[RMDB]
Background: Conditions: 150 mM KOAc, 10 mM MgCl2 and 150 mM bicine (pH 8.5), 24 C. Structure probing data (2A3) for a 207-nucleotide construct. For 2A3, 808 sequencing reads were counted.

RNA sequence: GGGAACGACUCGAGUAGAGUCGAAAACCCUGAAACAGAGUAAACUGGGUCAGUACUGAGAGCACCAAGGGGAACAUCCCGCGCAUCGCUUGUUCCCAUUGUCGCGUACACCAAAUUCCCGCAUGUCGCCACCAACCAUCCCGUGUGGAUGGCCCUCCUGAAAUUAGCACUUCGGUGCUAAUUUCAGAAAAGAAACAACAACAACAAC
Reactivity to 2A3 in 0.01 (KOAc 150mM, MgCl2 10mM, bicine 150mM(pH8.5), 24C), signal-to-noise 2, nucleotides 027 to 156: c000c000c000u010g020a020a040a010c030a080g030a000g130u140a080a110a110c100u070g010g010g070u070c050a030g020u060a050c030u050g030a030g030a020g150c030a030c100c040a100a090g020g010g000g020a030a000c010a030u110c000c090c040g000c030g030c030a070u130c050g000c070u060u080g000u050u000c000c000c010a030u020u060g040u030c000g000c030g040u060a000c050a010c040c050a000a110a160u050u050c000c010c000g090c010a050u050g090u110c040g000c000c010a060c000c050a150a090c010c000a010u000c000c030c060g240u200g130u260g160g010a000u000g000g000c030c000c000u000c000